[RMDB]
RNA sequence: GGGAACGACUCGAGUAGAGUCGAAAAAUAAAGCGUAAUCGCAUCCCAGUAGCAAAGAGCAGCGUAAAGGCGAAAGCCGAACUCAAGAUCGCAUCGGGCUAAGAUGCGAUCGUAGCCACGGAAAAAAGUAUGAUUGUUAGUUCGCUAACAAUCAUACAAAAGAAACAACAACAACAAC
Reactivity to 2A3 in 0.01 (KOAc 150mM, MgCl2 10mM, bicine 150mM(pH8.5), 24C), signal-to-noise 4, nucleotides 027 to 126: a010u130a020a100a030g010c010g040u070a110a100u190c050g000c010a020u020c010c020c010a010g080u080a010g000c040a050a080a050g060a040g020c060a010g020c030g120u130a120a060a050g010g000c010g050a040a010a000g000c000c010g020a020a010c030u040c060a050a030g000a010u000c000g000c000a000u010c010g050g070g060c050u080a090a030g010a010u010g000c000g000a000u010c000g000u000a000g000c010c010a050c040g080g000a060a090a020a000a030a000
Reactivity to DMS in 0.01 (KOAc 150mM, MgCl2 10mM, bicine 150mM(pH8.5), 24C), signal-to-noise 6, nucleotides 027 to 126: a090u020a060a100a110g010c010g010u010a140a120u000c060g020c010a140u000c010c020c000a130g000u010a050g010c060a050a090a090g020a050g030c040a050g010c080g000u010a050a100a130g010g020c010g000a080a050a150g020c000c000g000a070a070c060u010c050a090a100g010a010u010c000g020c000a010u000c000g000g010g030c230u020a090a110g000a000u000g010c000g000a000u000c000g010u000a040g000c040c070a050c080g000g010a000a030a050a050a070a090
Chemical mapping of a 177-nucleotide RNA with 2A3 and DMS. The RNA was probed in 150 mM KOAc, 10 mM MgCl2 and 150 mM bicine (pH 8.5) at 24 C. The data come from the RNA Mapping Database (RMDB), library M2PK90. For 2A3 the reverse transcriptase was SuperScript II with manganese. For DMS, 7,311 sequencing reads were counted.